[RMDB]
Source: RMDB library M2PK90, as collected in RNAgym.
This 177-nucleotide RNA was probed chemically with DMS and 2A3.
2A3 adducts were read by reverse transcription with SuperScript II with manganese.
For DMS, 958 sequencing reads were counted.
RNA sequence: GGGAACGACUCGAGUAGAGUCGAAAAAAAAAUAGCGAUUCUCGUUAUAGUUGAGUCCUUCGAGGAUUGCUAAGCAAAGAUGCAGAACUAUCAAUGAACGUCUUUGAGGACAUUUCUAUACUAAAAACAUUACAGUGACGUUCGCGUCACUGUAAUGAAAAGAAACAACAACAACAAC
Reactivity to DMS in 0.01 (KOAc 150mM, MgCl2 10mM, bicine 150mM(pH8.5), 24C), signal-to-noise 2, nucleotides 027 to 126: a040a040a130a020a110u000a010g000c010g010a020u000u000c000u010c000g030u000u000a050u010a130g000u000u000g010a230g020u010c100c040u000u010c040g030a010g020g000a000u000u000g000c010u000a030a110g030c020a000a080a010g020a030u010g000c090a110g000a050a080c120u010a110u010c160a090a140u010g020a110a120c110g010u000c030u000u000u010g010a060g000g000a080c050a090u000u010u000c030u000a050u010a070c080u030a060a060a010a040a080
Reactivity to 2A3 in 0.01 (KOAc 150mM, MgCl2 10mM, bicine 150mM(pH8.5), 24C), signal-to-noise 1, nucleotides 027 to 126: a010a020a010a020a020u060a000g000c000g020a010u000u000c010u000c000g000u050u050a050u130a170g130u040u050g170a050g170u080c000c020u020u050c010g000a000g000g000a000u010u020g000c030u040a020a030g110c000a020a000a030g040a030u040g000c090a010g050a250a040c040u100a100u300c040a110a100u090g010a130a000c020g010u000c000u050u040u060g030a050g010g110a020c020a080u030u110u070c090u090a110u010a210c080u110a000a150a040a130a000

For 2A3, 669 sequencing reads were counted.